[RMDB]
RNA sequence: GGGAACGACUCGAGUAGAGUCGAAAAGACACGCAAAAGUUCGCUUUUGCGUGUCAUGCCUUCAAUGUAGUCACCCCUUUCGAGGUGAUUGAUACCUAGUAUCCACGAAGAUUCGUCUUCGUGGAUAGCAAAAAGUACGAUUCGUCGUACUUUUUGCAAAAGAAACAACAACAACAAC
Reactivity to 2A3 in 0.01 (KOAc 150mM, MgCl2 10mM, bicine 150mM(pH8.5), 24C), signal-to-noise 5, nucleotides 027 to 126: g000a000c000a000c010g000c010a010a000a000a010g020u040u090c160g060c070u000u000u000u000g000c000g000u000g000u000c000a000u000g020c010c000u080u170c120a180a140u220g090u150a030g010u010c010a010c000c000c000c010u040u190u190c130g050a110g000g030u010g020a010u000u090g030a040u110a160c050c060u030a080g080u030a030u000c000c000a000c000g000a010a000g010a010u030u100c170g040u000c090u000u010c000g010u000g000g000a000u000a010
Reactivity to DMS in 0.01 (KOAc 150mM, MgCl2 10mM, bicine 150mM(pH8.5), 24C), signal-to-noise 4, nucleotides 027 to 126: g000a010c000a010c000g000c010a000a000a000a000g010u000u020c220g020c000u000u000u000u000g010c000g010u000g010u000c000a010u000g020c010c010u000u010c170a150a110u000g010u000a040g000u000c000a010c000c000c010c050u010u010u000c230g010a050g000g020u000g000a010u000u010g010a120u010a090c170c170u000a090g010u010a010u000c000c000a000c000g000a010a000g000a040u010u010c220g010u000c000u000u000c000g020u000g000g000a000u000a000
Structure probing data (2A3 and DMS) for a 177-nucleotide construct.
Source: RMDB library RFMREP, as collected in RNAgym.